This 177-nucleotide RNA was probed chemically with DMS. Source: RMDB library TTRDEL, as collected in RNAgym. The reactions ran in a buffer of 150 mM KOAc, 10 mM MgCl2 and 150 mM bicine (pH 8.5), at 24 C. Values cover nucleotides 27 to 126.
RNA sequence: GGGAACGACUCGAGUAGAGUCGAAAAGAUAUGGAGCAUGGUGAACUACGAACAUUGUCGGAAACGACUUUGUUCGCACCCGCUGCUCCUAAGUCAAAACUAUACCAUCGUUCGCGAUGGUAUAGAACAACGUAUUCCCCUUCGGGGGAAUACGUUGAAAAGAAACAACAACAACAAC
Reactivity to DMS in 0.01 (KOAc 150mM, MgCl2 10mM, bicine 150mM(pH8.5), 24C), signal-to-noise 2, nucleotides 027 to 126: g030a000u000a300u000g000g010a000g040c030a010u020g000g030u010g000a090a090c170u020a300c060g000a000a010c000a010u000u000g000u010c000g060g000a080a110a160c020g010a010c000u010u000u000g010u000u000c000g000c000a010c030c010c040g000c050u000g000c000u010c000c000u000a010a070g000u010c010a070a100a090a170c000u000a000u000a000c000c000a000u000c000g010u010u000c200g030c030g000a010u000g000g010u000a000u000a000g000a050a180